[RMDB]
RNA sequence: GGGAACGACUCGAGUAGAGUCGAAAAGAUAUGGAAAUCUUCGCAUAGCGAAACUAUGUCGGAAACGACAUAGUAGUAGCUAUGAACUACGAACUUCCUAAGUCAAAGAGCCAGUUCGCUGGCUCAAGUCACUUAGGUUGUUCGCAACCUAAGUGACAAAAGAAACAACAACAACAAC
Reactivity to DMS in 0.01 (KOAc 150mM, MgCl2 10mM, bicine 150mM(pH8.5), 24C), signal-to-noise 2, nucleotides 027 to 126: g000a080u010a300u010g000g000a050a040a040u000c140u010u000c110g020c020a010u000a020g000c000g000a180a180a190c000u000a000u000g000u010c000g020g000a160a110a120c010g020a010c000a000u000a000g010u000a020g000u000a120g020c000u000a000u000g010a100a050c150u000a200c010g000a010a010c090u000u000c010c030u010a020a120g010u000c010a050a170a140g000a010g000c000c000a000g020u000u020c240g010c000u000g000g020c000u000c000a010a010
Reactivity to 2A3 in 0.01 (KOAc 150mM, MgCl2 10mM, bicine 150mM(pH8.5), 24C), signal-to-noise 1, nucleotides 027 to 126: g030a000u090a090u200g000g050a020a090a100u120c060u040u020c050g050c040a000u000a010g000c010g010a000a000a020c040u000a000u030g010u010c010g040g000a040a110a000c010g000a020c010a000u000a000g000u000a000g010u000a000g000c000u010a000u000g000a000a000c010u090a040c020g010a000a010c020u040u040c020c000u040a200a100g070u040c020a000a040a240g030a000g010c000c000a020g000u080u130c300g120c250u000g010g010c000u010c000a000a000

Source: RMDB library TTRDEL, as collected in RNAgym. Chemical mapping of a 177-nucleotide RNA with DMS and 2A3. The DMS profile rests on 993 reads. The RNA was probed in 150 mM KOAc, 10 mM MgCl2 and 150 mM bicine (pH 8.5) at 24 C. The 2A3 profile rests on 1,911 reads. High DMS reactivity at an A or C suggests that its Watson-Crick edge is free. For 2A3 the reverse transcriptase was SuperScript II with manganese.